[RMDB]
This 177-nucleotide RNA was probed chemically with DMS.
Source: RMDB library TTRINS, as collected in RNAgym.
RNA sequence: GGGAACGACUCGAGUAGAGUCGAAAAGAUAUGGAUUAGCUACUAAUAUGGUAGGGCGAUAAGAUGUCCUCGGAAACGAGGAAACAUCUUUUGACGCCUGUACAUAUUAGUAGCUAAUCCUAAGUCACACUCUAUCACUCUUCGGAGUGAUAGAGUGAAAAGAAACAACAACAACAAC
Reactivity to DMS in 0.01 (KOAc 150mM, MgCl2 10mM, bicine 150mM(pH8.5), 24C), signal-to-noise 1, nucleotides 027 to 126: g020a030u000a300u000g000g000a000u000u030a000g010c000u010a020c000u000a040a000u000a000u000g010g010u020a300g000g000g090c000g040a230u000a020a010g050a000u000g010u000c000c000u000c020g010g020a100a120a220c000g020a000g000g010a080a080a010c000a000u030c000u000u010u010u010g070a300c030g020c000c000u000g000u000a220c000a000u000a000u000u000a000g000u000a000g000c000u000a000a000u000c000c000u000a000a070g000u020c060a300